An RNA of 177 nucleotides, treated with DMS and 2A3 and read out base by base. For DMS the reverse transcriptase was MarathonRT. The data come from the RNA Mapping Database (RMDB), library OK2TST.
RNA sequence: GGGAACGACUCGAGUAGAGUCGAAAAGCAAGCCAAGCAAUAAAGCAGCCUAAUAAGGUGUCGAUUAGGCGAGGUAAAAUAAUGCUGAAACCUGCACCUUUUAAGUUGAAAAUGAGCAAUACCAUUACCGUGAGCUAUUAUUCGUAAUAGCUCACGGAAAAGAAACAACAACAACAAC
Reactivity to DMS in 0.01 (KOAc 150mM, MgCl2 10mM, bicine 150mM(pH8.5), 24C), signal-to-noise 1, nucleotides 027 to 126: g000c030a060a070g050c040c020a130a040g000c020a170a060u000a120a110a150g020c030a100g000c000c020u000a010a050u000a000a010g010g030u000g010u000c130g000a050u000u000a140g030g000c020g030a140g010g020u000a020a080a030a150u030a090a040u010g000c000u000g000a120a140a040c180c020u010g000c010a030c000c010u010u060u000u000a000a000g000u010u000g000a010a010a030a060u010g010a100g020c050a020a030u010a060c090c080a060u010u030a090
Reactivity to 2A3 in 0.01 (KOAc 150mM, MgCl2 10mM, bicine 150mM(pH8.5), 24C), signal-to-noise 1, nucleotides 027 to 126: g010c030a020a020g120c000c010a000a000g040c020a100a190u110a180a090a040g050c010a000g040c020c010u030a040a030u150a190a000g000g070u040g070u100c040g060a080u030u080a000g000g000c020g020a030g000g030u080a050a050a060a130u210a030a130u250g000c020u000g050a090a000a040c000c000u010g000c020a020c020c000u090u000u040u000a030a000g000u000u000g040a040a140a050a000u130g030a120g080c010a010a100u040a200c080c040a090u120u110a040